RNA sequence: GGGAACGACUCGAGUAGAGUCGAAAACUGAUCGCCAAGAUAACGAUAAACGCCGUACACCUAAUGGCAGAGCACAAGAAACAAUUAAUGUCAAUCUGCGCGCAUAAGCAGAACUUGUGACUAAUUGGUCCUUACUAAAGUUCGCUUUAGUAAGGACAAAAGAAACAACAACAACAAC
Reactivity to DMS in 0.01 (KOAc 150mM, MgCl2 10mM, bicine 150mM(pH8.5), 24C), signal-to-noise 8, nucleotides 027 to 126: c070u010g010a070u000c040g000c030c050a100a100g010a080u030a070a100c070g020a080u010a070a100a120c160g000c030c030g000u000a090c130a110c060c060u010a040a100u000g010g010c030a090g000a070g020c030a040c070a050a050g000a150a090a180c030a030a090u030u020a060a120u020g010u000c070a050a090u010c000u000g010c020g020c230g030c190a170u020a080a090g000c010a020g000a030a170c120u020u010g000u000g000a050c040u010a040a070u000u020g000
Reactivity to 2A3 in 0.01 (KOAc 150mM, MgCl2 10mM, bicine 150mM(pH8.5), 24C), signal-to-noise 9, nucleotides 027 to 126: c020u040g040a060u060c020g010c020c010a060a030g050a130u150a110a040c050g030a030u060a110a190a030c060g010c020c010g020u050a030c050a050c040c030u080a110a050u080g030g000c030a010g040a020g020c010a010c010a040a030g060a090a120a020c050a020a060u170u230a110a100u170g040u080c030a020a060u000c020u000g000c030g000c010g000c060a060u050a250a070g000c010a000g010a030a040c020u040u060g040u020g080a080c010u040a040a080u040u050g060

Chemical mapping of a 177-nucleotide RNA with DMS and 2A3. The reactions ran in a buffer of 150 mM KOAc, 10 mM MgCl2 and 150 mM bicine (pH 8.5), at 24 C. Reactivities are given for positions 27 through 126. For 2A3 the reverse transcriptase was SuperScript II with manganese.